[RMDB]
RNA sequence: GGGAACGACUCGAGUAGAGUCGAAAAGUGCGCGAAUGCGCGGGGCGUGCGAGGUGAGUGUGUGCGCCCGCCCCUGCGCCCCUCCCCCUGCCUACAACUUGAUCUUAUUUGAUCGGGUAGUGGCCCCGCGGUAGGAGGGUUUCGACCCUCCUACCGCAAAAGAAACAACAACAACAAC
Reactivity to 2A3 in 0.01 (KOAc 150mM, MgCl2 10mM, bicine 150mM(pH8.5), 24C), signal-to-noise 2, nucleotides 027 to 126: g170u060g020c060g000c000g120a300a170u200g000c000g020c030g000g000g020g030c000g000u030g000c090g050a130g010g150u190g060a240g020u220g000u030g050u080g030c020g030c030c020c000g000c010c000c010c010u040g000c000g000c020c000c000c010u000c000c020c000c000c030u060g010c000c000u040a030c000a100a070c010u030u060g000a000u000c000u010u260a280u200u300u240g010a000u000c020g000g000g000u010a030g000u000g030g030c000c000c010c020